[RMDB]
RNA sequence: GGGAACGACUCGAGUAGAGUCGAAAACUGCAGGUCAACGGUACUUCUUCAGAUCAGCUAUUGCAGAAGAUAGGUUAACCAAGCGCUCUGGGCCAGUGCGACUGUAUAUAGGAGCUUUUGAUUUAAACCAGAAGCUAACUCUCUCCGAAACAAUGAGCGUAGCGUAAUAGUUCGCUAUUACGCUACGAAAAGAAACAACAACAACAAC
Reactivity to 2A3 in 0.01 (KOAc 150mM, MgCl2 10mM, bicine 150mM(pH8.5), 24C), signal-to-noise 9, nucleotides 027 to 156: c030u060g020c020a020g010g060u070c030a050a010c080g030g010u020a040c020u010u030c000u030u040c020a030g010a210u060c030a020g060c040u100a090u210u200g010c040a020g010a060a010g040a080u160a050g060g000u060u050a040a020c030c020a040a020g010c010g000c030u010c030u030g010g060g020c030c020a010g020u020g030c030g030a050c040u030g040u080a070u020a030u070a190g090g020a010g000c010u030u020u020u020g070a120u060u110u290a070a060a030c020c000a010g000a030a000g010c010u020a070a070c010u010c000u000c010u000c070c030g070a050a100a050c070a090a160u180g010a020g050
Reactivity to DMS in 0.01 (KOAc 150mM, MgCl2 10mM, bicine 150mM(pH8.5), 24C), signal-to-noise 3, nucleotides 027 to 156: c040u010g020c030a060g020g020u000c040a090a110c070g010g030u000a070c050u010u010c030u000u010c040a110g010a110u000c050a150g020c070u000a080u010u000g010c050a170g020a110a110g010a080u000a050g020g020u000u010a060a090c020c060a080a070g010c070g020c030u000c040u000g020g010g020c020c030a100g040u010g020c050g010a070c040u020g030u010a090u010a150u020a140g000g000a100g020c010u010u000u000u000g000a100u000u000u010a070a090a070c050c030a050g000a010a040g030c010u000a040a090c070u010c040u000c030u000c030c040g000a110a070a080c040a050a110u010g010a140g030